[RMDB]
RNA sequence: GGGAACGACUCGAGUAGAGUCGAAAAGUGGCGCACGCCUGUAGUCCCAGCUACUCGGGAGGCUGAGACAGGAGGAUCGCUUGAGUCCAGGAGUUCUGGGCUGUAGUGCGCUAUGCCGAUCGGGUGUCCGCACUAAGUUCGGCAUCAAUAUGGUGACCUGUGUAAUGAACUUCGGUUCAUUACACAGAAAAGAAACAACAACAACAAC
Reactivity to 2A3 in 0.01 (KOAc 150mM, MgCl2 10mM, bicine 150mM(pH8.5), 24C), signal-to-noise 5, nucleotides 027 to 156: g050u050g030g020c000g000c000a010c020g070c020c010u040g090u100a070g050u050c020c000c000a020g000c040u080a070c020u030c070g040g040g030a080g040g010c030u030g000a010g020a060c020a060g080g060a060g020g050a150u090c060g030c130u050u090g050a020g020u000c000c010a050g030g080a170g050u240u170c010u000g000g000g000c000u010g020u040a040g000u000g000c000g000c020u000a020u020g000c000c000g020a020u010c030g060g010g000u040g020u040c070c150g070c040a010c010u090a190a130g000u020u030c000g000g000c000a000u020c020a010a070u180a060u210g100g040u080g030a070c000
Reactivity to DMS in 0.01 (KOAc 150mM, MgCl2 10mM, bicine 150mM(pH8.5), 24C), signal-to-noise 1, nucleotides 027 to 156: g020u000g010g000c000g060c030a070c000g000c010c030u000g010u000a140g000u010c020c000c010a150g000c010u000a020c000u000c090g010g000g060a260g000g000c000u000g000a060g020a050c030a080g000g030a110g000g010a060u010c000g010c080u020u000g010a050g050u010c000c000a000g030g000a180g000u000u020c030u010g010g040g000c010u000g010u010a040g040u000g020c010g010c030u000a000u000g020c000c000g030a070u000c000g010g060g030u010g010u000c160c180g050c060a090c050u000a070a110g000u000u000c030g000g000c010a050u000c050a050a110u000a110u000g030g000u000g000a110c160
Source: RMDB library ARCHII, as collected in RNAgym. Chemical mapping of a 207-nucleotide RNA with 2A3 and DMS. The reactions ran in a buffer of 150 mM KOAc, 10 mM MgCl2 and 150 mM bicine (pH 8.5), at 24 C.